Annotation:
The record gives the reactivity of an RNA of 177 nucleotides to DMS. The reactions ran in a buffer of 150 mM KOAc, 10 mM MgCl2 and 150 mM bicine (pH 8.5), at 24 C. It was measured as part of the RMDB library OK2TST. Reactivities are given for positions 27 through 126.
[RMDB]
RNA sequence: GGGAACGACUCGAGUAGAGUCGAAAAUCCAGUUCCUGAUUGAAGAGUUAGCUGUUGGCGCGCAGUUCAACAUUCCGUACAUCCAUGUGCUGGUCAACAACGCUUAUCUGGGGCUGAUUCGUCAGUCAAUAAAGUCGGACUUCGGUCCGACUUUAUUAAAAGAAACAACAACAACAAC
Reactivity to DMS in 0.01 (KOAc 150mM, MgCl2 10mM, bicine 150mM(pH8.5), 24C), signal-to-noise 1, nucleotides 027 to 126: u010c030c010a240g000u010u000c030c000u010g020a140u000u010g000a110a090g000a060g020u000u020a020g030c030u000g030u010u000g010g000c050g040c060g060c110a010g000u000u000c160a040a100c140a120u010u020c060c020g050u000a090c100a080u020c150c260a100u010g000u000g000c030u000g010g010u000c080a010a040c020a040a010c050g020c170u010u000a000u000c100u000g030g020g020g020c000u010g010a040u030u000c030g020u000c000a010g010u000c030